Source: RMDB library TTRINS, as collected in RNAgym. This 177-nucleotide RNA was probed chemically with DMS and 2A3. 2A3 adducts were read by reverse transcription with SuperScript II with manganese.
RNA sequence: GGGAACGACUCGAGUAGAGUCGAAAAGAUAUGGAACGCUGCAAACGAUAAUCGUCCUACCCACCUACCGGAUCGGAAACGAUCCGUGUAGAGGGACGAUUAUCGGACGUAUAGCGUUCCUAAGUCAGAAAUAGUAUACGUUCGCGUAUACUAUUUCAAAAGAAACAACAACAACAAC
Reactivity to DMS in 0.01 (KOAc 150mM, MgCl2 10mM, bicine 150mM(pH8.5), 24C), signal-to-noise 6, nucleotides 027 to 126: g000a090u010a300u000g000g010a020a000c000g020c010u000g000c120a120a270a300c000g010a010u000a000a000u000c010g030u000c010c010u010a120c070c070c100a300c090c000u000a000c010c000g020g000a020u000c000g010g000a150a090a140c010g010a000u000c010c000g000u010g010u000a010g000a110g000g000g000a010c010g000a010u000u000a000u000c010g010g000a020c300g020u000a130u010a040g010c000g000u000u000c000c000u000a010a070g010u000c080a190
Reactivity to 2A3 in 0.01 (KOAc 150mM, MgCl2 10mM, bicine 150mM(pH8.5), 24C), signal-to-noise 6, nucleotides 027 to 126: g020a020u110a060u120g000g000a000a020c020g020c020u170g090c250a260a070a040c010g010a010u010a000a010u010c000g010u000c000c020u160a300c090c040c010a060c020c010u010a010c000c000g000g000a010u000c000g000g050a060a060a050c010g000a000u020c010c000g000u080g000u010a010g000a020g000g000g000a000c000g000a000u010u000a000u000c000g000g000a000c030g060u120a140u300a300g000c000g000u000u000c000c000u010a040a020g060u030c080a050